[RMDB]
RNA sequence: GGGAACGACUCGAGUAGAGUCGAAAAGGGGACAUUGUGGCAAGCAUUCCGUGUUUUAAAAAGGGGUAAGUUUUGUAGUUGGAAAUACACAUGCUCUCCAAUCAUUUGAAAACAUCGAUCUGCAAACUCAUACACUAUCGUUCGCGAUAGUGUAUGAAAAAGAAACAACAACAACAAC
Reactivity to DMS in 0.01 (KOAc 150mM, MgCl2 10mM, bicine 150mM(pH8.5), 24C), signal-to-noise 6, nucleotides 027 to 126: g020g000g010g010a090c100a060u000u010g030u010g010g020c150a100a140g020c100a090u000u000c040c070g020u000g010u000u000u000u010a010a040a050a110a140g010g000g000g000u010a060a060g000u000u000u000u000g010u000a070g020u000u000g000g000a060a070a120u000a060c030a040c030a020u000g000c090u000c030u000c010c010a050a080u010c120a120u000u000u000g000a050a030a030a040c070a030u000c210g010a050u000c050u010g020c040a050a070a060c160
Reactivity to 2A3 in 0.01 (KOAc 150mM, MgCl2 10mM, bicine 150mM(pH8.5), 24C), signal-to-noise 5, nucleotides 027 to 126: g010g000g000g010a000c040a080u060u170g040u030g070g000c060a060a030g020c000a070u090u030c030c010g030u030g040u050u060u030u090a120a130a020a020a010g040g000g010g010u060a090a050g030u100u120u190u190g050u030a170g020u030u050g080g050a080a100a060u200a030c020a000c000a000u020g000c000u020c000u000c020c010a020a040u060c030a020u060u070u200g100a060a060a000a010c030a020u080c040g030a030u020c030u050g000c030a040a020a090c020